Description
Structure probing data (DMS and 2A3) for a 177-nucleotide construct. 2A3 adducts were read by reverse transcription with SuperScript II with manganese.

RNA sequence: GGGAACGACUCGAGUAGAGUCGAAAAAGAGCCAGCAGAGACGAAGUCUUCCGUGUUCCAGGUGGCAGUGACAAGAGAAAGAGUAGGACUCGCGCCAGUCCGCAGGCAUCUCUCCUCUGGCGAGAAGCAAUACGCAUAUAUUCGUAUAUGCGUAUUGAAAAGAAACAACAACAACAAC
Reactivity to DMS in 0.01 (KOAc 150mM, MgCl2 10mM, bicine 150mM(pH8.5), 24C), signal-to-noise 9, nucleotides 027 to 126: a070g010a300g010c010c020a040g020c110a080g010a100g010a050c080g000a090a100g010u000c030u000u000c040c050g010u000g010u000u000c030c030a130g000g020u000g000g010c040a060g010u010g000a070c110a080a070g000a090g000a060a080a080g000a110g010u000a090g020g000a190c020u000c080g010c080g010c050c050a110g010u000c020c020g010c100a050g000g010c090a070u000c030u000c020u000c040c040u000c050u000g010g010c040g000a110g010a090a080g010
Reactivity to 2A3 in 0.01 (KOAc 150mM, MgCl2 10mM, bicine 150mM(pH8.5), 24C), signal-to-noise 9, nucleotides 027 to 126: a000g110a020g010c000c000a010g020c060a010g030a000g000a050c060g050a120a030g030u010c020u100u030c060c020g070u060g050u130u020c040c030a040g030g020u030g070g010c030a020g030u030g080a050c060a100a040g040a010g080a150a140a010g100a020g050u120a130g030g050a020c010u020c060g080c020g020c070c010a010g020u010c010c010g000c000a000g040g000c010a030u020c020u000c000u020c020c000u060c030u020g020g010c050g010a060g020a030a010g050